Structure probing data (DMS and 2A3) for a 207-nucleotide construct. DMS (dimethyl sulfate) methylates the pairing face of unpaired adenines and cytosines.
RNA sequence: GGGAACGACUCGAGUAGAGUCGAAAAAAACUGUUCGCAGUUUAGUAAUUCCUAAGUCCUGGUGAGGGAUGAUGACUGAUGACCCACUCGGAAACGAGUGGCAAGGUCGCAUCCUCCCCACCACCAGGAUAUGGACUGUAAGCCGUUUCGACGGCAACUUUCAGUUUAUGUUCGCAUAAACUGAAAGAAAAGAAACAACAACAACAAC
Reactivity to DMS in 0.01 (KOAc 150mM, MgCl2 10mM, bicine 150mM(pH8.5), 24C), signal-to-noise 3, nucleotides 027 to 156: a040a010a040c020u010g020u000u000c200g010c020a020g000u010u000u000a100g010u000a110a140u000u000c000c010u020a130a140g000u000c000c000u000g000g030u000g030a300g030g010g000a010u000g030a060u000g030a050c040u000g000a130u010g000a170c300c000c000a030c000u000c000g020g010a170a060a270c000g010a030g030u000g000g010c010a030a050g030g020u000c000g000c030a020u000c000c010u000c090c040c000c030a250c120c010a010c030c020a050g030g010a020u000a110u000g000g020a090c110u000g000u010a070a170g020c000c000g000u000u010u000c190g000a110c020g030g030c020a020a020
Reactivity to 2A3 in 0.01 (KOAc 150mM, MgCl2 10mM, bicine 150mM(pH8.5), 24C), signal-to-noise 4, nucleotides 027 to 156: a000a000a000c050u050g020u070u080c180g000c090a000g000u030u030u050a030g010u080a090a270u140u060c000c000u020a080a020g020u010c000c000u000g000g000u000g010a040g030g000g000a000u000g020a020u020g050a060c120u140g020a090u080g100a080c000c010c000a000c000u010c000g010g020a080a050a050c020g000a000g020u000g000g010c000a020a080g100g000u000c020g000c030a000u000c000c020u000c000c010c000c020a060c020c020a010c000c000a000g000g000a010u000a000u010g000g010a040c050u110g090u190a140a020g010c000c000g000u020u110u200c210g090a070c010g000g000c010a010a020
For DMS, 5,116 sequencing reads were counted. Reactivities are rounded to 0.1 and cut off at 0 and 3. For 2A3 the reverse transcriptase was SuperScript II with manganese. The reactions ran in a buffer of 150 mM KOAc, 10 mM MgCl2 and 150 mM bicine (pH 8.5), at 24 C.